[RMDB]
The record gives the reactivity of an RNA of 177 nucleotides to 2A3 and DMS.
RNA sequence: GGGAACGACUCGAGUAGAGUCGAAAAGAUAUGGACACGGAACUACUCGCGCACGAGCAAUGAUGUCGGAAACGAUUGAGCUCGGAUCGAGCCGUGUCCUAAGUCAAAACGCGUGUUCGCACGCGAACCCAAUUAUUGCCUUCGGGCAAUAAUUGGGAAAAGAAACAACAACAACAAC
Reactivity to 2A3 in 0.01 (KOAc 150mM, MgCl2 10mM, bicine 150mM(pH8.5), 24C), signal-to-noise 2, nucleotides 027 to 126: g020a060u070a030u150g000g000a000c010a020c020g020g000a080a060c070u250a040c000u300c000g070c000g000c060a080c110g030a000g000c000a070a300u220g090a040u200g060u080c000g020g020a050a050a030c010g020a000u030u090g030a010g040c000u010c030g010g020a080u090c030g010a010g010c000c000g000u000g000u010c000c000u000a000a000g020u010c010a030a040a000a110c020g010c020g000u010g020u070u130c300g050c140a000c010g040c000g030a050a050
Reactivity to DMS in 0.01 (KOAc 150mM, MgCl2 10mM, bicine 150mM(pH8.5), 24C), signal-to-noise 2, nucleotides 027 to 126: g040a070u010a300u000g020g000a000c000a040c040g020g000a120a070c030u030a300c020u000c010g000c240g000c300a220c020g020a000g070c030a270a090u000g020a070u000g000u070c010g000g000a050a060a110c000g000a040u000u000g010a100g000c020u010c000g000g000a140u020c000g000a000g010c000c000g000u000g010u000c000c000u000a000a040g010u000c050a100a030a190a130c000g000c000g060u000g000u000u010c100g020c030a000c010g000c000g010a020a070
Values are in units of 0.01, from 0 to 300, in steps of 10. DMS adducts were read by reverse transcription with MarathonRT. Conditions: 150 mM KOAc, 10 mM MgCl2 and 150 mM bicine (pH 8.5), 24 C. Values cover nucleotides 27 to 126. The data come from the RNA Mapping Database (RMDB), library TTRDEL.